[RMDB]
An RNA of 177 nucleotides, treated with 2A3 and DMS and read out base by base. Source: RMDB libraries RFM100 and RFMREP, as collected in RNAgym.
RNA sequence: GGGAACGACUCGAGUAGAGUCGAAAAAUCUCAUAGUUUUUGGACAGCAGUAUUAGUAAAGUGUAAGAAAAUUGUCAAAGCUUGGAGCUAUGCUUGUUGAACUUUUGUACCAAUAGCACCUUUACCACGCUCUUACUUAAUUCGUUAAGUAAGAGCGAAAAGAAACAACAACAACAAC
Reactivity to 2A3 in 0.01 (KOAc 150mM, MgCl2 10mM, bicine 150mM(pH8.5), 24C), signal-to-noise 8, nucleotides 027 to 126: a010u030c010u000c020a060u080a080g080u020u030u020u100u080g050g010a030c000a020g020c010a010g020u040a020u180u100a040g030u050a040a090a030g050u090g060u140a080a030g060a100a080a080a090u160u140g090u080c030a050a070a020g010c000u040u060g080g010a040g010c030u050a030u070g010c020u060u100g030u050u050g050a060a050c030u060u060u070u120g050u080a080c010c030a040a040u020a030g020c010a060c030c000u060u050u090a080c020c020a050
Reactivity to DMS in 0.01 (KOAc 150mM, MgCl2 10mM, bicine 150mM(pH8.5), 24C), signal-to-noise 6, nucleotides 027 to 126: a090u000c020u000c010a110u010a090g000u000u000u000u000u000g020g010a090c080a040g000c070a040g010u010a070u010u010a070g010u000a060a050a050g020u010g010u010a060a120g000a070a060a060a080u010u010g000u000c040a050a040a080g010c040u000u010g000g020a110g010c030u000a050u010g010c050u000u010g020u010u000g000a070a070c060u010u010u010u000g010u000a050c060c050a030a060u010a050g010c050a050c060c020u000u010u010a100c060c120a130